[RMDB]
Structure probing data (DMS and 2A3) for a 177-nucleotide construct. Conditions: 150 mM KOAc, 10 mM MgCl2 and 150 mM bicine (pH 8.5), 24 C. 2A3 adducts were read by reverse transcription with SuperScript II with manganese.
RNA sequence: GGGAACGACUCGAGUAGAGUCGAAAAAAGUAAAGAGGCUUGCGUAAUUAUGACGCUACUGACAAAGAGACCAUGGUCUUCGUAUCGGAUGAAACGUGAGAUCCCAUUAAUGAAUGGGAUCUAUUUUAUUUAUUGAACAAUUCGUUGUUCAAUAAAUAAAAGAAACAACAACAACAAC
Reactivity to DMS in 0.01 (KOAc 150mM, MgCl2 10mM, bicine 150mM(pH8.5), 24C), signal-to-noise 5, nucleotides 027 to 126: a060a070g000u020a030a060a070g010a120g000g000c080u010u000g000c050g020u020a100a080u020u020a090u020g010a100c020g000c030u000a050c060u010g020a170c140a060a080a100g020a040g000a090c040c040a070u030g020g010u010c020u000u010c040g000u000a080u010c040g000g000a110u010g010a060a050a050c090g020u010g000a030g000a010u000c000c000c000a000u000u000a140a120u020g000a080a010u000g000g000g000a000u000c000u000a000u000u000u000u000
Reactivity to 2A3 in 0.01 (KOAc 150mM, MgCl2 10mM, bicine 150mM(pH8.5), 24C), signal-to-noise 9, nucleotides 027 to 126: a000a000g200u210a080a070a020g100a050g030g030c090u070u060g010c030g040u040a110a170u140u130a180u300g060a010c000g010c010u050a060c020u030g060a040c080a050a090a020g050a020g000a010c020c030a090u150g060g020u020c010u050u030c050g050u100a060u070c010g000g040a050u070g070a090a090a030c060g030u050g060a020g000a000u000c000c000c020a010u040u070a120a210u230g200a020a000u000g000g000g000a000u000c000u000a000u000u000u000u000